RNA sequence: GGGAACGACUCGAGUAGAGUCGAAAAUACAAUAAACUAUCAUUUGUUAAAAUACAAUAAACAUGCAAAAGCGCUAUCAUUGAUAGCACUUUUAAUGUUUAAAUAACCCACUGAUUACUUUCUCUAGUGGAUUAUUUGCAAGGGUAGAGUAAGAAUACAUAGCUAGUAAUUUCGAUUACUAGCUAUGAAAAGAAACAACAACAACAAC
Reactivity to DMS in 0.01 (KOAc 150mM, MgCl2 10mM, bicine 150mM(pH8.5), 24C), signal-to-noise 1, nucleotides 027 to 156: u000a100c040a130a110u010a100a100a150c040u000a090u010c020a160u000u010u030g000u010u000a060a120a050a110u020a080c020a100a250u000a030a030a010c010a050u000g000c140a030a010a010a010g000c000g030c000u000a010u000c020a280u010u020g020a030u010a000g030c000a010c000u010u000u000u000a090a010u000g010u000u000u000a020a100a000u000a020a070c000c010c000a010c010u000g010a090u010u000a090c130u000u000u000c140u010c070u010a020g000u000g030g000a030u000u010a030u010u000u000g010c070a080a030g000g000g010u000a040g000a130g010u000a080a080g010a080a080u000a200
Reactivity to 2A3 in 0.01 (KOAc 150mM, MgCl2 10mM, bicine 150mM(pH8.5), 24C), signal-to-noise 2, nucleotides 027 to 156: u130a000c030a020a180u180a110a120a070c010u030a000u060c010a080u020u030u040g020u060u140a090a180a100a120u200a040c030a030a050u080a040a010a020c030a020u050g090c120a010a000a000a000g000c000g000c010u010a000u000c060a270u060u300g010a000u000a000g020c000a030c000u060u050u000u000a020a010u000g010u000u000u060a020a030a010u050a010a030c000c000c000a010c000u020g010a030u120u120a200c070u130u240u110c130u040c070u070a020g000u010g000g000a000u000u040a000u030u100u060g010c000a010a020g010g010g000u020a010g000a060g060u100a100a020g050a060a020u150a040